[RMDB]
Overview:
An RNA of 207 nucleotides, treated with 2A3 and read out base by base. The 2A3 profile rests on 582 reads.

RNA sequence: GGGAACGACUCGAGUAGAGUCGAAAAAAGACUGUCUGCUCAACACCCGCAGCCAACCCAUGAAUUCUGCUUAGUCAGAAAGGACGAGACGGUGCCUGGUUCGAAUCCCGGAGUCGCGACCCGGGCGUGGUCUUAUUUAAUGGACCGCGUCUCUUCUUAGUUUCAAGUAGUUCGCUACUUGAAACUAAAAAGAAACAACAACAACAAC
Reactivity to 2A3 in 0.01 (KOAc 150mM, MgCl2 10mM, bicine 150mM(pH8.5), 24C), signal-to-noise 1, nucleotides 027 to 156: a000a000g040a010c010u030g020u070c010u030g010c040u030c020a050a090c030a090c040c000c010g000c040a020g000c000c030a000a100c020c010c040a070u130g100a090a170u120u000c010u010g020c070u210u230a060g100u300c010a010g040a050a030a000g040g020a030c010g010a030g010a080c000g000g000u010g000c000c040u110g020g000u070u130c030g040a090a050u030c000c030c000g030g000a010g010u000c000g000c000g070a220c010c000c000g000g010g020c010g010u010g000g000u010c020u010u170a240u300u240u080a190a110u180g020g010a000c000c000g010c000g000u000c000u000c000u030u020c000u010

The data come from the RNA Mapping Database (RMDB), library ARCHII.